Structure probing data (2A3 and DMS) for a 177-nucleotide construct. For DMS the reverse transcriptase was MarathonRT. The 2A3 profile rests on 779 reads. The RNA was probed in 150 mM KOAc, 10 mM MgCl2 and 150 mM bicine (pH 8.5) at 24 C. For DMS, 1,070 sequencing reads were counted.
RNA sequence: GGGAACGACUCGAGUAGAGUCGAAAAUGUAAUUUCUGAAAUAACACUGGUAAGCAACUUAGUUCAUGGCUUAGAGGCAUGAGGAGCUAAGAAGCCUUGUGAAAUCACACCGUGACACUCGAUGUUGCGACCACUUAUGUUUCGACAUAAGUGGUCGAAAAGAAACAACAACAACAAC
Reactivity to 2A3 in 0.01 (KOAc 150mM, MgCl2 10mM, bicine 150mM(pH8.5), 24C), signal-to-noise 1, nucleotides 027 to 126: u110g060u020a000a160u000u030u020c100u030g060a100a070a100u200a220a090c050a020c050u010g050g040u080a060a050g050c020a010a040c040u070u070a020g050u120u000c020a050u090g000g000c020u110u090a110g000a060g190g000c020a020u010g040a010g050g060a020g020c010u040a130a000g050a080a020g000c000c000u040u070g040u010g030a150a150a120u090c060a010c060a050c000c010g040u070g000a000c010a000c010u060c030g110a090u150g060u010u010g000
Reactivity to DMS in 0.01 (KOAc 150mM, MgCl2 10mM, bicine 150mM(pH8.5), 24C), signal-to-noise 2, nucleotides 027 to 126: u000g000u010a070a080u010u000u000c010u030g020a090a110a070u030a100a110c070a120c110u000g050g010u000a070a170g020c010a040a260c000u000u000a010g000u000u000c030a030u000g020g000c030u000u000a120g010a030g000g020c010a020u000g000a020g000g030a100g020c010u010a080a040g000a060a300g020c040c060u000u020g030u000g000a030a060a050u010c060a110c180a080c100c070g000u000g000a040c130a040c030u000c120g000a030u010g000u000u000g020